[RMDB]
RNA sequence: GGGAACGACUCGAGUAGAGUCGAAAAGGCGGGAACGAUCACAGCUGGUGGGGUCCGGUCGAGGUGAUCCACCUCGAACAGCAGGCGGGCAAUCGUCCGGCCUACUCUGCGAGCCAUGGACUCUCGGGAAGGGGCGGUAAUUCGUUACCGCCCCUUCAAAAGAAACAACAACAACAAC
Reactivity to DMS in 0.01 (KOAc 150mM, MgCl2 10mM, bicine 150mM(pH8.5), 24C), signal-to-noise 1, nucleotides 027 to 126: g000g020c060g000g010g010a070a070c030g020a080u020c090a050c090a130g000c090u000g000g060u000g000g000g010g010u000c020c040g000g000u010c010g040a020g010g020u020g010a140u010c120c070a060c030c000u010c030g040a030a040c070a120g010c140a020g020g030c000g030g030g040c000a120a040u020c100g000u010c000c010g020g020c090c010u010a050c050u020c050u000g040c040g010a010g000c060c070a170u000g000g000a040c020u000c010u000c050g000g000
The record gives the reactivity of an RNA of 177 nucleotides to DMS. Reactivities are given for positions 27 through 126. Conditions: 150 mM KOAc, 10 mM MgCl2 and 150 mM bicine (pH 8.5), 24 C.